[RMDB]
RNA sequence: GGGAACGACUCGAGUAGAGUCGAAAACUCCAGCUGAAUCGAACCGAGUAUCGAUUCAGAGAUCUGACUUGAUGCUUACGGUUACCACAACUCAAUGUUGUGAUAGCUGGGACAUUGAGUAAUGUACGAUGUACUGAUAUUUCGAUAUUAGUACAUCAAAAGAAACAACAACAACAAC
Reactivity to 2A3 in 0.01 (KOAc 150mM, MgCl2 10mM, bicine 150mM(pH8.5), 24C), signal-to-noise 9, nucleotides 027 to 126: c020u000c000c000a010g010c000u010g010a020a020u030c020g010a020a030c040c060g080a040g060u170a060u040c000g000a000u000u000c000a000g000a000g010a070u050c040u080g050a010c000u000u000g010a000u000g020c020u040u090a060c000g000g000u010u000a010c000c000a000c000a020a010c000u060c070a140a140u280g000u000u000g010u010g010a020u020a000g000c000u000g000g010g020a010c000a010u010u020g020a010g020u070a080a130u170g040u090a050c110
Reactivity to DMS in 0.01 (KOAc 150mM, MgCl2 10mM, bicine 150mM(pH8.5), 24C), signal-to-noise 9, nucleotides 027 to 126: c080u020c010c020a130g010c000u000g000a020a010u000c010g010a020a050c020c180g020a220g010u030a060u000c000g010a010u000u000c000a010g000a090g010a100u020c100u020g000a040c010u000u000g000a000u000g000c090u000u010a080c010g010g010u000u000a010c060c000a000c010a000a010c010u010c280a120a100u050g010u000u000g020u000g010a030u000a000g010c000u000g000g000g010a100c010a010u000u000g000a000g010u000a060a070u030g010u020a100c220